[RMDB]
Notes: Source: RMDB library M2PK50, as collected in RNAgym. Structure probing data (DMS and 2A3) for a 177-nucleotide construct. The 2A3 profile rests on 2,111 reads. For DMS the reverse transcriptase was MarathonRT. The DMS profile rests on 1,020 reads.

RNA sequence: GGGAACGACUCGAGUAGAGUCGAAAAGCAUAACUGUUCGCAGUUAUGCAAAACACGAAGCUGGAAACAGACGCAGUGAAACAUACAAAAGCGAAAACAAAAAAAGCCAACAGUUCGCUGUUGGCAACCUACUCAAUUUGUUCGCAAAUUGAGUAGGAAAAGAAACAACAACAACAAC
Reactivity to DMS in 0.01 (KOAc 150mM, MgCl2 10mM, bicine 150mM(pH8.5), 24C), signal-to-noise 2, nucleotides 027 to 126: g000c050a000u000a040a000c010u000g000u010u010c090g020c010a050g000u000u000a000u010g000c030a000a020a080a160c010a020c000g000a150a290g000c040u000g010g020a210a090a120c000a010g000a030c030g000c140a180g010u000g010a050a080a210c100a080u010a220c110a080a060a020a020g010c030g010a000a060a110a060c150a040a020a090a140a080a020a090g000c000c000a000a000c010a010g000u000u010c220g000c010u000g010u000u000g000g040c000a000a000
Reactivity to 2A3 in 0.01 (KOAc 150mM, MgCl2 10mM, bicine 150mM(pH8.5), 24C), signal-to-noise 2, nucleotides 027 to 126: g000c010a000u010a000a010c000u020g030u080u030c070g000c030a010g000u020u000a000u010g000c000a040a000a000a020c060a010c020g040a070a010g020c020u010g000g020a050a090a020c020a020g180a090c000g030c070a010g000u020g040a060a050a000c030a020u290a040c050a040a070a010a010g010c030g070a040a030a090a080c120a040a140a030a020a000a020a000g000c000c000a000a000c000a000g040u100u100c150g060c140u010g000u000u000g000g080c000a000a000